[RMDB]
This 177-nucleotide RNA was probed chemically with DMS and 2A3.

RNA sequence: GGGAACGACUCGAGUAGAGUCGAAAACUGCUAGUACCGAGAAGGAAAGUGAAAAUACCGUUAAAGAGCCUAUCUAUCUCGAUAUUGUACUAAGCGAUAUUGCAGAAGACGGGAAGUUUUCAUUCCAACUUUUAAAUGCGUUCGCGCAUUUAAAAGUAAAAGAAACAACAACAACAAC
Reactivity to DMS in 0.01 (KOAc 150mM, MgCl2 10mM, bicine 150mM(pH8.5), 24C), signal-to-noise 2, nucleotides 027 to 126: c080u000g000c090u020a070g000u000a140c080c080g010a100g000a110a270g000g000a090a060a100g010u010g010a050a010a040a040u000a170c060c070g000u000u000a060a100a100g010a120g000c090c100u000a090u000c020u010a170u000c000u010c020g000a020u000a030u010u000g000u000a070c190u000a100a190g000c020g000a030u000a010u020u000g000c140a030g010a070a140g000a000c040g020g000g000a080a100g000u000u000u000u000c000a090u000u000c030c030a120
Reactivity to 2A3 in 0.01 (KOAc 150mM, MgCl2 10mM, bicine 150mM(pH8.5), 24C), signal-to-noise 1, nucleotides 027 to 126: c010u030g000c040u060a010g010u010a030c030c020g050a010g060a210a060g020g020a120a120a050g080u050g000a000a040a000a030u050a070c010c010g050u050u100a120a180a060g080a030g000c040c030u050a080u060c040u080a060u010c010u000c000g010a000u000a030u050u090g000u030a120c070u070a090a050g000c000g020a000u010a020u030u070g060c100a010g010a070a010g020a060c000g060g000g000a080a030g030u020u000u020u050c010a030u070u000c030c000a020
The reactions ran in a buffer of 150 mM KOAc, 10 mM MgCl2 and 150 mM bicine (pH 8.5), at 24 C. Reactivities are given for positions 27 through 126. It was measured as part of the RMDB library OK2TST.